[RMDB]
RNA sequence: GGGAACGACUCGAGUAGAGUCGAAAAUUGUGACGAAAACUGUUUGACUCACCACUCAAUAGAAUGUGAGAUGAAGAGAGAGGUUAGGGCAUCGUCAAAACUGUUGGAUGAUAACGGUGGGGCAGGAACAUGGUCCAGAGUUCGCUCUGGACCAUGUAAAAGAAACAACAACAACAAC
Reactivity to 2A3 in 0.01 (KOAc 150mM, MgCl2 10mM, bicine 150mM(pH8.5), 24C), signal-to-noise 1, nucleotides 027 to 126: u060u070g020u000g050a030c080g060a090a030a090a030c040u050g120u020u070u140g050a040c020u040c010a000c000c000a010c010u100c000a020a160u070a150g150a090a120u230g030u060g060a050g030a140u120g000a030a060g100a000g000a000g010a000g090g000u070u090a010g020g000g000c020a060u050c010g070u000c020a000a000a030a090c100u090g090u100u020g000g070a020u070g020a040u060a090a030c020g010g010u020g000g000g000g050c000a030g000g050a070
Reactivity to DMS in 0.01 (KOAc 150mM, MgCl2 10mM, bicine 150mM(pH8.5), 24C), signal-to-noise 3, nucleotides 027 to 126: u000u000g020u010g000a120c040g010a100a050a070a110c070u000g020u010u020u010g010a230c050u000c010a060c050c160a090c040u010c020a080a080u010a160g010a080a070u000g000u000g010a030g000a110u000g020a060a110g010a090g010a100g040a080g020g010u000u010a090g020g010g000c110a140u000c030g020u000c030a040a090a070a050c060u010g010u000u000g000g010a030u000g010a080u000a030a080c120g000g030u000g010g000g090g010c090a070g020g010a080